An RNA of 177 nucleotides, treated with DMS and read out base by base.
Conditions: 150 mM KOAc, 10 mM MgCl2 and 150 mM bicine (pH 8.5), 24 C.
The data come from the RNA Mapping Database (RMDB), library OK2TRN.
For DMS the reverse transcriptase was MarathonRT.

RNA sequence: GGGAACGACUCGAGUAGAGUCGAAAAAUGCCAUGUUGCGGUCUACUUACGCGGCGAGCGCCUACCUGAUUGUAACGUGAAUGUGCCGUUGCGACCCUACCACCUUGCCUUAUCCGAACCAACGAACUAAUUCAACGCGAUUCGUCGCGUUGAAUUAAAAAGAAACAACAACAACAAC
Reactivity to DMS in 0.01 (KOAc 150mM, MgCl2 10mM, bicine 150mM(pH8.5), 24C), signal-to-noise 1, nucleotides 027 to 126: a080u000g000c030c020a080u000g010u000u000g040c090g000g000u000c080u000a030c090u000u000a100c100g030c050g000g000c060g020a140g050c080g040c050c050u000a090c070c130u050g030a040u000u000g010u040a050a050c060g030u010g000a120a110u000g010u000g010c020c050g020u000u010g060c010g020a120c060c060c020u000a120c040c040a060c060c020u000u000g010c010c020u000u010a100u000c030c020g000a090a240c090c060a030a070c090g010a080a140c210